[RMDB]
RNA sequence: GGGAACGACUCGAGUAGAGUCGAAAACGCUGGGCACAUAUCAAUGCACGCUGUCAUAAGACAGCCUACUGAAGCGCGCACGGUAGGCAAUGACGUGACACGGCGUGCAUGACCACGUGUGCCUGUGCUGAAGCGCGCACGGCAACCGAAAGGUGCGGACAAGGGACAACUUCGGUUGUCCCUUGUCAAAAGAAACAACAACAACAAC
Reactivity to 2A3 in 0.01 (KOAc 150mM, MgCl2 10mM, bicine 150mM(pH8.5), 24C), signal-to-noise 1, nucleotides 027 to 156: c050g000c030u060g000g010g020c030a000c000a010u130a010u090c120a250a040u020g000c000a010c000g010c040u110g000u040c010a010u030a150a110g090a090c040a050g130c000c010u040a000c010u020g000a110a020g000c000g000c000g000c000a000c010g010g000u000a000g040g010c050a000a190u150g030a040c060g080u030g050a000c040a010c090g100g030c020g000u000g040c000a000u000g000a040c070c030a120c300g020u010g000u000g030c000c000u000g010u000g000c000u020g010a050a060g000c000g000c000g000c000a010c020g020g000c020a050a060c000c000g000a020a030a050g000g020u030g030c010g010
About this RNA:
Structure probing data (2A3) for a 207-nucleotide construct. 2A3 adducts were read by reverse transcription with SuperScript II with manganese. It was measured as part of the RMDB library RNAMAK.